[RMDB]
RNA sequence: GGGAACGACUCGAGUAGAGUCGAAAAGGGGUCAAAUUUGUCAGGCGAAUAGGCUUGGAUUUACCAGCUGAAGCCUCCACGGCUGGUUGUCAGCCUAAACCUUGGAUUUAAUUUGACGGAGGCACCCAAAAUCAUCUUUCGUUCGCGAAAGAUGAAACGUACCAUAUGGCUUCGGCCAUAUGGUACGAAAAGAAACAACAACAACAAC
Reactivity to 2A3 in 0.01 (KOAc 150mM, MgCl2 10mM, bicine 150mM(pH8.5), 24C), signal-to-noise 2, nucleotides 027 to 156: g060g010g040g010u030c070a100a130a130u080u040u030g030u030c060a010g000g020c010g020a120a170u050a030g000g040c090u060u230g190g000a040u190u120u180a000c000c000a000g000c000u000g050a100a010g030c020c000u000c020c020a030c000g010g000c000u010g010g000u000u020g010u040c040a000g010c000c000u050a070a060a040c010c030u070u240g040g000a050u000u140u120a050a060u040u030u030g050a050c050g010g020a010g010g000c000a020c060c000c000a130a060a040a090u000c000a000u000c010u000u000u000c000g030u000u070c250g020c000g160a000a000a020g010a000u030g030a010a000a040